Background: An RNA of 207 nucleotides, treated with DMS and 2A3 and read out base by base.
[RMDB]
RNA sequence: GGGAACGACUCGAGUAGAGUCGAAAAAAGCAAAAGACGUCAGAUCAUGGAUAUCGAAUCGUGAAUUGCAACUCGACUAUGAGAGAUCUAAAACAAGCAGCACUGAUUUAUUCGGAACUGCAGGCCGAACCAUCGACUCGCCCCUUCAUCGAAGCCACCUAAUAGGCUCAUUCGUGAGCCUAUUAGGAAAAGAAACAACAACAACAAC
Reactivity to DMS in 0.01 (KOAc 150mM, MgCl2 10mM, bicine 150mM(pH8.5), 24C), signal-to-noise 2, nucleotides 027 to 156: a050a060g030c010a070a070a060a100g020a060c070g000u000c110a110g010a100u010c090a110u000g060g010a150u000a060u010c030g030a040a040u000c020g100u000g040a120a090u000u020g000c020a040a070c010u000c030g000a070c080u020a100u000g010a130g000a170g030a060u000c010u000a060a060a130a040c050a040a110g000c070a060g020c070a120c050u000g010a080u000u000u000a130u030u020c020g030g010a100a060c000u000g020c030a110g000g040c020c030g000a030a120c050c060a070u000c000g010a040c040u000c010g000c050c020c000c020u000u000c060a040u000c060g010a050a080g000c040c010a170
Reactivity to 2A3 in 0.01 (KOAc 150mM, MgCl2 10mM, bicine 150mM(pH8.5), 24C), signal-to-noise 4, nucleotides 027 to 156: a000a000g030c050a030a030a030a040g030a000c060g080u110c180a030g010a080u040c060a200u300g210g020a110u130a000u120c030g030a050a050u060c010g010u010g050a160a010u020u000g000c010a000a130c020u000c020g060a010c050u040a050u140g030a010g010a040g010a120u040c030u130a030a050a030a050c070a110a000g000c030a000g000c000a000c070u030g020a060u040u080u170a080u160u070c020g010g040a060a060c000u040g000c010a020g040g000c030c010g010a030a000c040c010a060u040c010g060a050c030u030c030g040c000c020c000c000u060u060c040a070u090c030g050a030a000g080c020c080a030
The reactions ran in a buffer of 150 mM KOAc, 10 mM MgCl2 and 150 mM bicine (pH 8.5), at 24 C. Values are in units of 0.01, from 0 to 300, in steps of 10.